[RMDB]
The record gives the reactivity of an RNA of 177 nucleotides to 2A3 and DMS.
2A3 adducts were read by reverse transcription with SuperScript II with manganese.

RNA sequence: GGGAACGACUCGAGUAGAGUCGAAAAAGUUGCCCAAUGUUUAGAGGGUGUAGUUGGCUCAAGUUCCUGUUUACCAGGUAGAACCUACUUGCAGCUGCUGCAUUCACGUGAUAUCAAUGGGCUUCCUACCUCGUGUUUAUUUCGAUAAACACGAGGUAAAAGAAACAACAACAACAAC
Reactivity to 2A3 in 0.01 (KOAc 150mM, MgCl2 10mM, bicine 150mM(pH8.5), 24C), signal-to-noise 9, nucleotides 027 to 126: a000g170u160u220g010c010c000c000a010a040u080g030u020u070u050a100g020a070g020g010g000u010g000u010a020g010u050u300g050g000c000u000c010a010a000g010u040u050c010c000u010g030u040u160u140a110c160c020a000g020g000u040a070g080a190a070c030c060u050a020c030u010u000g030c110a000g000c000u010g000c000u010g000c000a000u020u030c020a010c080g090u100g060a070u040a020u250c040a070a080u020g020g000g000c010u000u000c000c000u000
Reactivity to DMS in 0.01 (KOAc 150mM, MgCl2 10mM, bicine 150mM(pH8.5), 24C), signal-to-noise 2, nucleotides 027 to 126: a060g020u020u010g000c000c000c000a050a060u000g000u000u000u000a110g010a080g030g010g020u000g020u030a000g020u010u070g020g000c000u000c000a000a040g010u000u010c010c000u000g000u030u030u030a070c260c040a030g030g020u010a100g010a120a140c240c190u010a030c010u000u010g000c210a020g010c000u000g010c000u000g000c010a000u000u010c030a030c120g010u010g000a060u000a060u010c030a050a110u000g000g000g000c010u010u000c000c010u000